[RMDB]
RNA sequence: GGGAACGACUCGAGUAGAGUCGAAAAAGAUCAAUCAAGAAUCCAUGUGUGGAAUACUUCGAACCUAAUAAAGCUCCCAGUUCCACAGAAGCACUCACCACAUGCAAUUCCGCAUGGAGACCACGCCUAGUAGCAGAGACUAACAGACGAUGUGGGGAUUACUGGUGUCAUUCGUGACACCAGUAAUAAAAGAAACAACAACAACAAC
Reactivity to 2A3 in 0.01 (KOAc 150mM, MgCl2 10mM, bicine 150mM(pH8.5), 24C), signal-to-noise 2, nucleotides 027 to 156: a000g070a050u120c070a030a070u080c010a090a030g040a160a000u020c030c010a020u060g070u000g010u040g030g040a020a090u070a120c010u060u060c030g080a070a080c000c030u130a180a110u100a100a230a020g020c020u020c000c000c000a000g020u020u010c000c000a000c030a050g030a060a000g050c010a000c010u070c020a020c010c010a060c000a040u090g000c040a060a200u200u030c040c040g000c000a000u020g010g010a020g010a020c040c000a030c020g000c010c030u060a050g000u000a000g040c070a000g080a000g050a090c010u070a120a000c020a030g090a070c100g010a010u020g020u060g010g010g050g000
Reactivity to DMS in 0.01 (KOAc 150mM, MgCl2 10mM, bicine 150mM(pH8.5), 24C), signal-to-noise 1, nucleotides 027 to 156: a110g050a160u020c080a050a130u000c050a100a070g000a140a110u000c040c020a120u000g010u000g040u000g000g020a210a110u010a030c040u000u010c000g010a100a110c010c000u000a090a170u000a040a040a070g040c000u000c050c020c020a090g040u000u000c020c010a040c100a290g030a070a150g030c030a010c090u000c000a040c050c040a060c000a010u000g030c130a090a110u010u000c060c060g020c030a040u000g000g000a100g040a170c040c030a050c000g000c030c000u020a040g010u000a060g000c030a240g030a150g020a070c010u000a020a070c060a110g000a120c070g010a020u000g010u000g010g030g000g020
An RNA of 207 nucleotides, treated with 2A3 and DMS and read out base by base. It was measured as part of the RMDB library OK3TST.